[RMDB]
The record gives the reactivity of an RNA of 177 nucleotides to 2A3. For 2A3, 321 sequencing reads were counted. 2A3 adducts were read by reverse transcription with SuperScript II with manganese. The reactions ran in a buffer of 150 mM KOAc, 10 mM MgCl2 and 150 mM bicine (pH 8.5), at 24 C. Source: RMDB library OK1LIB, as collected in RNAgym.
RNA sequence: GGGAACGACUCGAGUAGAGUCGAAAAAGAAACUGGAUGCUGAACUUGGGAAGCUUAAAUCAGAAUUUGGUCAAACACACGAGAGUGUGAGCUUUUAUUUCUUGAUGGAGUAUUUCAGAGAAAUGUCGCAAGACCUCAACUUCGGUUGAGGUCUUGCAAAAGAAACAACAACAACAAC
Reactivity to 2A3 in 0.01 (KOAc 150mM, MgCl2 10mM, bicine 150mM(pH8.5), 24C), signal-to-noise 1, nucleotides 027 to 126: a000g030a000a000a000c000u040g000g000a000u020g000c000u070g060a050a050c000u000u130g300g000g030a060a000g000c160u000u150a000a000a240u130c080a000g170a150a190u200u300u290g000g000u060c020a170a090a000c000a000c000a000c000g260a080g000a110g200u000g000u000g080a000g000c000u300u060u000u000a000u150u080u000c000u000u000g190a200u080g000g130a080g010u110a090u000u180u060c060a060g060a040g060a000a000a000u300g000u230c110